[RMDB]
RNA sequence: GGGAACGACUCGAGUAGAGUCGAAAAAGCUCCGCGUACGCGCGGAGCAUUUGGACCCGGUGUAAUUCCGGGUGGCUCUUCCGGCCGCCAAUCCGCCGGAUAACGAGCUCACUCUACGGAGUGAGCAUUACUUGACGAUUUUCGAAUCGUCAAGUAAAAAAGAAACAACAACAACAAC
Reactivity to DMS in 0.01 (KOAc 150mM, MgCl2 10mM, bicine 150mM(pH8.5), 24C), signal-to-noise 3, nucleotides 027 to 126: a050g010c000u010c000c010g010c010g020u000a110c250g020c020g010c000g050g000a010g040c000a000u010u000u000g010g020a050c010c010c010g040g000u000g010u040a160a300u030u010c020c000g010g030g000u000g010g010c090u000c070u000u000c000c010g010g040c000c160g000c030c020a090a100u040c080c050g000c000c000g010g000a020u030a030a110c230g010a100g030c000u000c000a010c010u000c000u000a180c180g040g010a030g010u000g000a000g010c000a030
Reactivity to 2A3 in 0.01 (KOAc 150mM, MgCl2 10mM, bicine 150mM(pH8.5), 24C), signal-to-noise 3, nucleotides 027 to 126: a020g010c000u010c000c000g000c020g010u020a050c300g000c010g010c010g070g010a000g010c010a010u030u050u050g040g010a010c000c000c020g000g000u020g000u020a030a010u120u030c020c010g000g010g000u010g020g000c000u040c000u130u010c000c000g000g000c020c020g010c030c010a020a070u070c040c060g000c010c010g000g000a010u030a100a030c120g010a020g000c010u000c000a000c010u000c000u010a070c270g080g000a000g000u000g000a000g000c000a000
The record gives the reactivity of an RNA of 177 nucleotides to DMS and 2A3. For 2A3, 3,275 sequencing reads were counted. It was measured as part of the RMDB libraries RFM100 and RFMREP. Reactivities are given for positions 27 through 126. DMS adducts were read by reverse transcription with MarathonRT.